Chemical mapping of a 177-nucleotide RNA with 2A3.
For 2A3, 257 sequencing reads were counted.

RNA sequence: GGGAACGACUCGAGUAGAGUCGAAAAGAUGCGUUUCCAUGCGGCACCGUCUACGGUCCGAAGAGAAACUUUCGUUUUUGGUCCUCCAUGUAAUCGCGUGUGGACAUCUGGAUGGCUUGCUGCAGCACGCGCCACGACGUUUCGACGUCGUGGCGCGAAAAGAAACAACAACAACAAC
Reactivity to 2A3 in 0.01 (KOAc 150mM, MgCl2 10mM, bicine 150mM(pH8.5), 24C), signal-to-noise 1, nucleotides 027 to 126: g100a200u300g000c140g070u000u040u010c000c000a000u100g000c000g000g130c030a010c000c000g000u090c000u000a190c040g000g060u120c220c040g000a000a000g000a000g090a000a150a150c000u080u080u000c000g030u000u110u000u090u290g300g000u000c020c000u000c000c000a080u080g140u300a300a000u080c150g000c300g070u030g080u190g020g000a170c170a180u070c030u000g020g020a010u070g000g010c090u040u080g000c000u000g040c060a000g000c000a000